Conditions: 150 mM KOAc, 10 mM MgCl2 and 150 mM bicine (pH 8.5), 24 C. An RNA of 177 nucleotides, treated with DMS and 2A3 and read out base by base. Values are in units of 0.01, from 0 to 300, in steps of 10. For 2A3 the reverse transcriptase was SuperScript II with manganese. For DMS, 2,566 sequencing reads were counted. It was measured as part of the RMDB library TTRDES.
RNA sequence: GGGAACGACUCGAGUAGAGUCGAAAAGAUAUGGAGUGUUACUCGGGAGUCAGGGUUCGGAAACGAACCUGACUUUGAUCGAGAGACACUCCUAAGUCAAAGGGUCAAAUCUUCGGAUUUGACCCAACUACCCUUCCAAGUUCGCUUGGAAGGGUAGAAAAGAAACAACAACAACAAC
Reactivity to DMS in 0.01 (KOAc 150mM, MgCl2 10mM, bicine 150mM(pH8.5), 24C), signal-to-noise 3, nucleotides 027 to 126: g000a070u000a300u010g000g010a020g050u000g000u010u000a180c000u000c000g020g000g000a020g010u000c000a010g000g010g010u010u010c000g020g000a110a050a200c010g010a010a060c000c010u000g000a020c000u000u000u010g020a100u000c010g000a020g010a300g000a040c020a000c010u000c000c000u000a000a070g000u000c050a130a050a140g000g000g000u000c000a000a000a000u000c010u000u010c220g040g000a030u000u000u010g000a010c000c000c010a000a010
Reactivity to 2A3 in 0.01 (KOAc 150mM, MgCl2 10mM, bicine 150mM(pH8.5), 24C), signal-to-noise 3, nucleotides 027 to 126: g020a010u050a020u120g000g010a000g020u000g030u020u070a110c010u000c040g090g240g040a020g020u000c030a050g070g260g200u080u000c010g020g020a060a050a050c000g000a010a000c010c020u000g000a000c000u060u040u150g170a210u260c010g000a000g000a030g010a000c010a010c000u000c010c000u000a050a000g020u010c050a100a070a140g010g010g000u080c090a020a000a000u020c020u120u220c300g130g000a000u000u010u000g000a000c000c000c000a010a000